[RMDB]
RNA sequence: GGGAACGACUCGAGUAGAGUCGAAAAACCGGCUCAUCUCGGCAAAGGGCGGCAGUCCUCAGUACUCUUACUCUUUCCUAUAAAGAGGAGACUGCUGGACUCGCCGCCCGAGCCCGAGCAUGGGCCCGUGCUGUAAUUAGUUCGCUAAUUACAGCACAAAAGAAACAACAACAACAAC
Reactivity to 2A3 in 0.01 (KOAc 150mM, MgCl2 10mM, bicine 150mM(pH8.5), 24C), signal-to-noise 2, nucleotides 027 to 126: a000c000c000g000g000c000u010c000a010u000c000u010c000g010g020c030a110a110a060g050g000g000c000g010g010c000a000g000u010c020c000u010c000a020g010u150a300c050u000c000u080u130a210c000u070c000u040u100u070c030c060u170a150u190a300a010a010g000a010g010g010a000g030a000c000u010g050c080u010g000g000a000c010u000c010g000c000c000g000c000c000c000g000a000g000c000c000c010g010a000g000c020a000u000g000g000g050c020c000c010
Reactivity to DMS in 0.01 (KOAc 150mM, MgCl2 10mM, bicine 150mM(pH8.5), 24C), signal-to-noise 1, nucleotides 027 to 126: a180c010c030g000g010c020u010c000a040u010c010u000c000g000g020c020a050a220a130g020g010g000c000g030g000c000a030g000u010c000c000u010c000a020g000u000a120c040u000c000u020u000a300c030u020c010u000u000u000c300c190u030a110u040a040a040a010g010a000g010g010a100g010a040c020u000g010c190u000g030g000a020c010u000c120g050c010c000g000c020c010c000g000a070g000c220c000c010g000a010g030c180a010u010g010g000g010c010c010c090